[RMDB]
RNA sequence: GGGAACGACUCGAGUAGAGUCGAAAAAGAACCGUGGUGAGGAGAUCGGGGUGACCCUGCCCACCCGCACGGCCAGAUUUACGCCUAUCCGUAUCUGACGCCGCGCACCGCGGCGAUGCUGCGCCAGCGUCGAUAAUCCAUUCGUGGAUUAUCGACGAAAAGAAACAACAACAACAAC
Reactivity to 2A3 in 0.01 (KOAc 150mM, MgCl2 10mM, bicine 150mM(pH8.5), 24C), signal-to-noise 2, nucleotides 027 to 126: a000g050a030a020c020c010g030u060g000g030u060g040a200g020g050a120g030a180u250c140g030g010g030g020u080g060a110c020c020c010u030g020c010c010c000a030c000c030c000g020c000a020c040g010g000c020c010a030g010a040u120u100u090a040c040g030c040c040u050a070u020c020c010g000u020a050u050c030u020g060a080c080g000c010c010g020c030g010c050a020c060c060g000c020g000g030c020g040a020u040g010c050u040g000c010g020c030c030a050g010
Reactivity to DMS in 0.01 (KOAc 150mM, MgCl2 10mM, bicine 150mM(pH8.5), 24C), signal-to-noise 3, nucleotides 027 to 126: a050g010a090a110c040c020g030u000g010g010u000g020a130g020g000a120g020a100u000c100g000g010g010g000u010g000a150c030c020c030u020g010c030c020c030a060c000c030c070g030c050a040c030g020g000c020c050a040g010a060u010u000u000a050c040g020c110c100u010a120u000c120c010g000u000a020u010c020u000g000a210c130g010c000c030g000c030g000c060a030c090c040g000c050g000g000c040g000a030u000g000c010u010g010c060g010c080c060a090g010